[RMDB]
RNA sequence: GGGAACGACUCGAGUAGAGUCGAAAAACUUAACGUUCUAACGGUGCAUGAGGCGCAGGGUGAGACAUAUGCGCGUGUGAAUCUUGUGCGACUUAAGUUUCAGGAGGAUGAACCUUUUAAGUCUAUCACCAGUUGUACUGUUCGCAGUACAACUGGUAAAAGAAACAACAACAACAAC
Reactivity to 2A3 in 0.01 (KOAc 150mM, MgCl2 10mM, bicine 150mM(pH8.5), 24C), signal-to-noise 3, nucleotides 027 to 126: a010c040u080u040a050a010c070g050u020u010c080u130a050a040c050g010g040u060g000c000a030u080g060a050g130g000c050g000c040a000g110g080g040u120g040a130g050a050c030a030u180a060u120g040c050g000c040g030u060g020u030g060a070a060u070c040u050u150g000u020g060c040g030a040c010u000u030a040a000g010u050u030u050c030a030g040g000a020g030g000a050u110g040a090a110c000c010u060u050u020u160a040a050g020u020c040u050a100u090c020
Reactivity to DMS in 0.01 (KOAc 150mM, MgCl2 10mM, bicine 150mM(pH8.5), 24C), signal-to-noise 4, nucleotides 027 to 126: a070c040u000u000a040a100c190g020u000u000c040u010a140a090c130g010g000u000g000c040a050u010g020a070g020g030c020g000c030a020g030g020g030u000g010a170g020a100c090a090u010a080u000g010c020g020c030g000u000g000u000g000a090a050u000c020u000u000g020u000g010c110g000a030c050u000u000a010a030g010u000u000u000c090a080g020g010a070g010g010a130u000g000a060a080c040c020u030u000u020u010a030a090g010u000c040u010a110u010c140
Structure probing data (2A3 and DMS) for a 177-nucleotide construct. Conditions: 150 mM KOAc, 10 mM MgCl2 and 150 mM bicine (pH 8.5), 24 C. The DMS profile rests on 3,926 reads. For DMS the reverse transcriptase was MarathonRT. Values cover nucleotides 27 to 126. It was measured as part of the RMDB library OK2TST.